An RNA of 207 nucleotides, treated with 2A3 and read out base by base. The reactions ran in a buffer of 150 mM KOAc, 10 mM MgCl2 and 150 mM bicine (pH 8.5), at 24 C.

[RMDB]
RNA sequence: GGGAACGACUCGAGUAGAGUCGAAAAAGCCGAUCAGUUACGACUGAUCGGCACGGGGUCGGGCAGGCACCCCAUCAGACGGUUCUCCGUCUAAGUUCGGUAGAGCGCUCGGUACGCCGAGAGCUCAAGUACGAGGGUCACUUCGGUGACCCUCGAAUCCAUGCACUGGAUUCGUCCAGUGCAUGGAAAAAGAAACAACAACAACAAC
Reactivity to 2A3 in 0.01 (KOAc 150mM, MgCl2 10mM, bicine 150mM(pH8.5), 24C), signal-to-noise 2, nucleotides 027 to 156: a010g000c010c000g000a000u000c000a010g000u040u120a060c180g050a030c120u000g010a000u000c040g020g010c020a000c080g020g010g000g000u120c100g000g090g150c040a040g060g000c060a010c000c000c000c000a050u180c070a000g000a000c010g030g020u300u200c150u020c070c040g010u000c010u020a040a020g080u050u230c070g020g070u110a040g000a000g000c010g010c010u030c010g000g010u040a030c220g000c040c000g000a000g000a000g000c000u000c010a000a010g050u040a050c020g000a000g000g000g000u000c000a000c030u070u120c290g040g010u000g020a000c000c000c010u000c000g000a000a000
For 2A3 the reverse transcriptase was SuperScript II with manganese. Values are in units of 0.01, from 0 to 300, in steps of 10. As a SHAPE reagent, 2A3 marks flexible, mostly unpaired nucleotides at the ribose 2'-OH. The 2A3 profile rests on 865 reads.